[RMDB]
RNA sequence: GGGAACGACUCGAGUAGAGUCGAAAAAUCUUAUCCUUUAUGAGUUUUCUCUGGACAGAAAUCAUAUGCAUCUUGAUUACACAAAAAAUCCACAAAUUAACAAGUUACAUCACAGAGUCUGGGCCUAACAAAUAGUAAAUGAGGUUAUUUUGGGGUAAAAUUUAGUACUGUUCGCAGUACUAAAUUUAAAAGAAACAACAACAACAAC
Reactivity to DMS in 0.01 (KOAc 150mM, MgCl2 10mM, bicine 150mM(pH8.5), 24C), signal-to-noise 2, nucleotides 027 to 156: a100u000c020u000u000a080u000c010c030u010u000u000a070u010g010a190g000u010u000u000u000c000u000c030u010g010g060a130c020a070g010a090a050a090u010c050a080u000a050u010g010c040a060u000c050u000u010g010a120u000u000a190c100a100c050a000a010a050a030a090a090u000c040c070a060c030a050a060a060u000u010a060a040c040a070a110g010u010u020a030c030a010u000c040a050c050a150g010a070g030u020c030u020g030g010g010c010c020u010a050a080c040a080a050a070u000a180g000u000a030a040a090u000g000a090g020g010u000u000a050u010u000u000u000g000g000g010g020u000a040
Reactivity to 2A3 in 0.01 (KOAc 150mM, MgCl2 10mM, bicine 150mM(pH8.5), 24C), signal-to-noise 2, nucleotides 027 to 156: a000u090c060u070u120a180u170c010c020u100u140u080a130u150g050a040g020u040u030u190u010c030u030c010u050g010g080a040c010a060g080a070a060a010u080c020a010u090a030u070g030c020a030u050c010u050u050g030a050u100u230a060c080a000c040a040a100a080a030a060a050u060c080c050a040c030a090a080a110u100u070a120a020c030a080a060g010u040u060a040c000a050u040c040a030c040a110g030a010g030u020c040u010g000g030g020c010c020u030a060a000c040a040a100a050u070a060g030u050a000a030a080u050g010a010g050g070u050u040a090u030u080u060u010g000g010g000g020u080a060
The record gives the reactivity of an RNA of 207 nucleotides to DMS and 2A3. The reactions ran in a buffer of 150 mM KOAc, 10 mM MgCl2 and 150 mM bicine (pH 8.5), at 24 C. For DMS the reverse transcriptase was MarathonRT. The 2A3 profile rests on 1,308 reads.